[RMDB]
An RNA of 177 nucleotides, treated with DMS and 2A3 and read out base by base. The 2A3 profile rests on 2,679 reads.
RNA sequence: GGGAACGACUCGAGUAGAGUCGAAAAUCAGUCCAGAGUGAGGCUCAACCCACAGGGGUUGCUUGGGAACUGUUGCCCGUGAGGAGUUGGGUGUUAUUAUCGGCUCCGCUCUGCAGACAUGGCAACCCAAUUCGAGUAGGUUCGCCUACUCGAAUUGAAAAGAAACAACAACAACAAC
Reactivity to DMS in 0.01 (KOAc 150mM, MgCl2 10mM, bicine 150mM(pH8.5), 24C), signal-to-noise 4, nucleotides 027 to 126: u000c060a050g010u000c010c010a060g000a040g020u000g000a110g010g010c030u000c060a040a090c010c010c000a130c150a100g020g000g010g020u000u000g010c040u000u000g010g000g020a130a150c090u000g020u000u010g020c020c020c040g010u000g010a100g000g010a060g010u000u000g020g010g020u000g010u010u010a110u010u010a080u000c050g000g000c020u000c020c020g000c010u000c020u000g000c110a110g010a070c050a070u000g010g010c100a050a090c010c020
Reactivity to 2A3 in 0.01 (KOAc 150mM, MgCl2 10mM, bicine 150mM(pH8.5), 24C), signal-to-noise 3, nucleotides 027 to 126: u070c020a000g030u000c010c000a020g010a000g070u040g020a060g010g060c010u030c040a050a070c020c000c010a060c050a040g000g000g010g060u060u060g000c030u110u140g070g040g030a130a100c060u050g070u090u090g020c010c040c050g120u010g040a030g060g030a050g020u070u100g100g060g010u070g120u170u090a220u120u050a090u140c040g050g000c010u000c020c000g010c000u000c010u030g010c070a040g000a060c040a090u030g030g000c010a030a050c030c000

Background
The reactions ran in a buffer of 150 mM KOAc, 10 mM MgCl2 and 150 mM bicine (pH 8.5), at 24 C. DMS adducts were read by reverse transcription with MarathonRT.